The record gives the reactivity of an RNA of 177 nucleotides to DMS. The data come from the RNA Mapping Database (RMDB), library OK2TST.

RNA sequence: GGGAACGACUCGAGUAGAGUCGAAAAAGAUAAUUCUGUUUUAGAGAUGGUCCACUGCAACACUGGGAACGUUGGAACUUUUCAGAAAGCAUUUUUGUGUAAGAUUCUGCAAGGCAGAUCUUUAGAGAACUUUGAAACCAUUCGUGGUUUCAAAGUUAAAAGAAACAACAACAACAAC
Reactivity to DMS in 0.01 (KOAc 150mM, MgCl2 10mM, bicine 150mM(pH8.5), 24C), signal-to-noise 1, nucleotides 027 to 126: a120g000a110u010a090a120u010u000c000u000g000u000u000u010u010a140g010a100g010a090u000g000g020u000c060c020a030c080u010g000c110a060a060c100a100c080u010g010g010g010a040a050c160g000u010u010g000g000a070a140c100u000u020u000u000c020a100g010a090a050a120g000c040a030u020u000u000u000u010g020u030g030u020a020a060g000a020u010u000c000u000g010c020a090a100g040g010c010a020g010a040u000c010u000u000u000a130g000a140g010